Description: Chemical mapping of a 177-nucleotide RNA with 2A3 and DMS. Reactivities are rounded to 0.1 and cut off at 0 and 3. The data come from the RNA Mapping Database (RMDB), library M2PK50.
[RMDB]
RNA sequence: GGGAACGACUCGAGUAGAGUCGAAAAGGGUAGAUCUUCGGAUCUACCCAAAACGAGCAACCAACGAAGGAAGUGCUAGCAUAAGCGUGCAGGCUAGCACUAAAAGGUUCCGCUUCGGCGGAACCAACGAAGUUAAUAGGUUCGCCUAUUAACUUCGAAAAGAAACAACAACAACAAC
Reactivity to 2A3 in 0.01 (KOAc 150mM, MgCl2 10mM, bicine 150mM(pH8.5), 24C), signal-to-noise 2, nucleotides 027 to 126: g000g000g000u010a010g000a010u000c010u010u050c180g030g000a000u000c000u000a000c000c000c000a000a000a000a000c010g010a020g020c020a010a040c020c000a040a040c060g120a090a030g120g060a050a020g000u000g000c000u000a000g000c010a070u020a220a020g070c050g110u090g040c060a010g090g000c000u000a000g000c000a000c000u000a000a000a010a030g000g000u000u000c000c000g010c000u050u030c230g120g020c000g000g010a000a010c000c000a000a000
Reactivity to DMS in 0.01 (KOAc 150mM, MgCl2 10mM, bicine 150mM(pH8.5), 24C), signal-to-noise 5, nucleotides 027 to 126: g020g010g010u000a000g010a000u000c000u000u010c190g040g000a000u000c000u000a000c000c000c010a000a000a040a080c110g000a100g000c070a070a110c030c020a080a100c160g010a120a090g010g020a110a050g020u000g000c000u000a000g000c000a080u010a070a090g010c050g010u000g010c070a130g010g010c000u000a000g000c000a010c000u000a020a050a110a100g010g010u000u000c000c000g010c000u000u010c160g030g000c000g020g000a010a010c000c010a020a040